The record gives the reactivity of an RNA of 207 nucleotides to DMS and 2A3. The DMS profile rests on 2,196 reads. 2A3 adducts were read by reverse transcription with SuperScript II with manganese. As a SHAPE reagent, 2A3 marks flexible, mostly unpaired nucleotides at the ribose 2'-OH.
RNA sequence: GGGAACGACUCGAGUAGAGUCGAAAAGUAUUCAGCGUUGAUCCAGCCGUACGCCUGACAGGUGACAUGCCCGGACAGCGGACUGCCCUGGACCAGCAGCACGUCGAAGCCUUCGGAGUCGAGAUCACGGCUCAGGCGAUACGCCUCGUCGUAGCGGUGAGUAGCAAACUUUCGAGUUUGCUACUCAAAAAGAAACAACAACAACAAC
Reactivity to DMS in 0.01 (KOAc 150mM, MgCl2 10mM, bicine 150mM(pH8.5), 24C), signal-to-noise 1, nucleotides 027 to 156: g000u000a110u010u010c060a110g000c030g020u000u010g000a080u000c010c020a160g050c040c010g010u010a050c000g020c020c060u000g040a250c060a100g030g020u000g000a120c020a200u000g020c010c000c060g010g010a180c090a090g010c040g020g010a060c030u010g010c000c020c070u000g040g050a090c070c080a100g010c000a050g020c140a060c060g010u000c040g020a090a110g020c030c050u000u000c030g030g000a020g000u020c080g010a260g000a120u000c140a080c020g020g000c060u000c020a060g000g010c000g020a120u000a020c000g000c020c020u000c030g030u010c010g060u010a060g010c060g000g000
Reactivity to 2A3 in 0.01 (KOAc 150mM, MgCl2 10mM, bicine 150mM(pH8.5), 24C), signal-to-noise 2, nucleotides 027 to 156: g050u070a120u130u170c040a040g000c030g000u070u060g060a080u000c000c020a030g040c010c020g050u040a030c030g020c000c030u010g070a010c010a120g050g080u020g070a070c050a110u180g010c000c030c010g030g020a010c000a000g030c000g060g020a030c020u040g020c050c030c010u040g040g090a060c050c000a010g000c020a000g030c040a000c030g010u010c040g070a130a030g000c020c000u010u110c090g040g000a080g030u090c020g020a030g020a180u110c040a020c120g020g000c000u010c000a000g060g000c000g000a020u010a030c010g030c020c020u000c020g050u010c060g020u050a050g020c050g050g040